[RMDB]
RNA sequence: GGGAACGACUCGAGUAGAGUCGAAAAUAAAAGGACAACGAUAUGCGCCUCUGCAACCUCCAGCUGGUGUUGUCUGGGAACCUGAUCAAAACUACCGAGUUUGAUCAGGCCAAUGCAGAGAAAAAAACCUAGAUAAUCUGUUCGCAGAUUAUCUAGGAAAAGAAACAACAACAACAAC
Reactivity to DMS in 0.01 (KOAc 150mM, MgCl2 10mM, bicine 150mM(pH8.5), 24C), signal-to-noise 2, nucleotides 027 to 126: u010a010a050a120a050g010g010a030c020a000a000c000g010a140u010a110u000g020c150g020c180c010u000c020u010g010c000a050a100c070c050u010c010c050a100g040c100u000g000g010u000g030u000u000g010u030c010u010g010g020g010a160a300c000c000u020g000a000u000c000a000a010a010a030c030u000a180c300c260g000a070g000u000u000u000g000a000u000c010a030g000g010c000c040a030a070u000g010c010a010g000a020g040a010a010a030a060a070a060a080
Reactivity to 2A3 in 0.01 (KOAc 150mM, MgCl2 10mM, bicine 150mM(pH8.5), 24C), signal-to-noise 1, nucleotides 027 to 126: u070a010a090a000a020g060g000a030c000a070a010c040g040a080u060a060u300g110c100g060c030c020u000c000u000g000c020a040a090c010c020u000c000c010a050g010c080u080g010g140u080g020u140u030g030u020c010u030g000g000g010a010a050c010c000u010g000a000u000c000a000a060a030a100c000u080a150c130c130g110a070g160u000u000u000g000a000u000c000a000g010g000c040c020a000a000u010g000c000a020g000a010g000a210a020a000a000a010a000a000